Annotation:
An RNA of 177 nucleotides, treated with 2A3 and DMS and read out base by base. Conditions: 150 mM KOAc, 10 mM MgCl2 and 150 mM bicine (pH 8.5), 24 C. For 2A3, 881 sequencing reads were counted. For DMS the reverse transcriptase was MarathonRT.

RNA sequence: GGGAACGACUCGAGUAGAGUCGAAAAAUCUACGACUCAUCAGAUCGUGGCCAGGAAAGUUUAGCUAGGUCUGCAUGUGUUUAUUAUUCUCAAGUCUUGUGUAAAUCAAUUCUUUUGGUUGACUCAACUCAAGAGGAAUGUUCGCAUUCCUCUUGAGAAAAGAAACAACAACAACAAC
Reactivity to 2A3 in 0.01 (KOAc 150mM, MgCl2 10mM, bicine 150mM(pH8.5), 24C), signal-to-noise 1, nucleotides 027 to 126: a000u020c060u020a040c030g060a000c050u000c020a010u000c000a020g010a020u010c020g250u130g050g010c010c030a070g000g150a230a170a020g070u170u230u160a030g010c010u000a010g010g000u010c040u000g010c040a010u020g030u000g000u000u020u000a010u000u050a060u080u000c030u000c030a060a100g070u060c050u100u060g010u010g030u070a020a010a080u050c010a000a000u060u140c050u140u180u030u060g060g000u030u020g000a020c010u000c040a040a070
Reactivity to DMS in 0.01 (KOAc 150mM, MgCl2 10mM, bicine 150mM(pH8.5), 24C), signal-to-noise 2, nucleotides 027 to 126: a090u000c140u010a110c140g000a040c000u000c000a040u000c010a020g000a010u000c010g020u020g000g050c000c080a210g000g010a090a100a080g030u030u000u010a080g010c010u010a200g040g000u000c000u000g010c240a020u020g000u000g000u010u000u000a050u010u010a140u000u000c020u000c010a070a170g020u020c070u000u000g000u000g010u010a100a050a040u010c000a000a040u000u010c180u000u010u000u000g000g010u000u010g000a040c050u000c040a030a180
Source: RMDB library 15KREP, as collected in RNAgym.
The DMS profile rests on 1,606 reads.